[RMDB]
RNA sequence: GGGAACGACUCGAGUAGAGUCGAAAAGAAAUUACGUUUCCUUUACACUUCUCAAACCGGGAUCAAGAGAAGCAAAGCAUCCCUCAUAUCCACGAUGGAGGGUGUCGUGGAGUAUACAGUACCAAAAAGAGCGAACACGGCUUCGGCCGUGUUCGAACGGAAUUAAUCCGUUCGCGGAUUAAUUCCGAAAAGAAACAACAACAACAAC
Reactivity to 2A3 in 0.01 (KOAc 150mM, MgCl2 10mM, bicine 150mM(pH8.5), 24C), signal-to-noise 2, nucleotides 027 to 156: g030a000a050a000u190u110a050c060g010u010u010u010c000c000u000u010u060a050c060a030c010u030u010c010u010c050a170a080a050c050c100g040g060g010a060u050c050a250a000g040a040g020a090a030g060c130a040a020a000g030c010a030u020c010c040c000u040c050a020u080a060u060c000c000a000c010g010a010u060g100g070a040g020g010g000u040g000u010c000g010u000g000g030a020g010u020a020u010a010c060a020g050u090a060c100c000a060a070a020a020a040g160a070g060c020g000a000a000c000a000c000g000g040c010u050u050c120g060g020c000c000g010u000g000u000u000c000g000a000a000